[RMDB]
RNA sequence: GGGAACGACUCGAGUAGAGUCGAAAACCAAUGGGAAACCAUUGGCAACUCGGAAACGAGUUGAAGCGGGAAUUACGAUCCAAACCGCCGACAAUGCGAUUUUAAGCAUUGUCGAUUACGCCCAUGUCGAUUUUAAGACAUGGAGCGAAGGAUCGAAGCAUCGAUGUGCGUUCGCGCACGUUGAUGCAAAAGAAACAACAACAACAAC
Reactivity to 2A3 in 0.01 (KOAc 150mM, MgCl2 10mM, bicine 150mM(pH8.5), 24C), signal-to-noise 7, nucleotides 027 to 156: c000c000a000a000u000g000g000g010a040a040a010c000c000a000u000u000g010g000c000a000a000c000u000c000g010g030a060a040a030c000g000a000g000u000u010g010a040a000g000c000g000g000g030a110a050u120u070a100c010g000a000u000c000c000a030a030a010c000c000g000c000c000g000a000c000a000a000u000g010c020g130a170u010u060u080u300a090a010g000c000a000u000u000g000u000c000g000a000u000u020a020c000g000c000c000c000a000u000g000u000c030g050a130u030u060u070u300a090a020g000a000c000a000u000g000g010a040g000c000g000a010a060g000g000a000u000c000g000a010a010
Reactivity to DMS in 0.01 (KOAc 150mM, MgCl2 10mM, bicine 150mM(pH8.5), 24C), signal-to-noise 4, nucleotides 027 to 156: c000c000a010a000u000g000g010g000a260a110a250c000c000a000u010u000g010g020c020a020a020c010u000c010g010g010a150a170a190c000g000a050g010u000u000g010a090a160g020c030g020g000g010a150a080u000u000a150c010g000a030u010c000c010a070a150a090c030c020g000c030c020g020a020c000a020a010u000g010c000g000a230u010u020u000u000a070a290g000c010a010u000u000g010u010c010g000a050u000u010a080c020g020c000c000c000a020u000g030u000c000g000a300u000u000u010u010a090a250g000a000c020a000u010g000g000a050g010c000g000a060a140g010g010a010u000c000g000a150a250

Chemical mapping of a 207-nucleotide RNA with 2A3 and DMS. The 2A3 profile rests on 16,368 reads. The DMS profile rests on 9,737 reads. DMS adducts were read by reverse transcription with MarathonRT. 2A3 adducts were read by reverse transcription with SuperScript II with manganese. The RNA was probed in 150 mM KOAc, 10 mM MgCl2 and 150 mM bicine (pH 8.5) at 24 C. Source: RMDB library OK3TST, as collected in RNAgym. Reactivities are given for positions 27 through 156.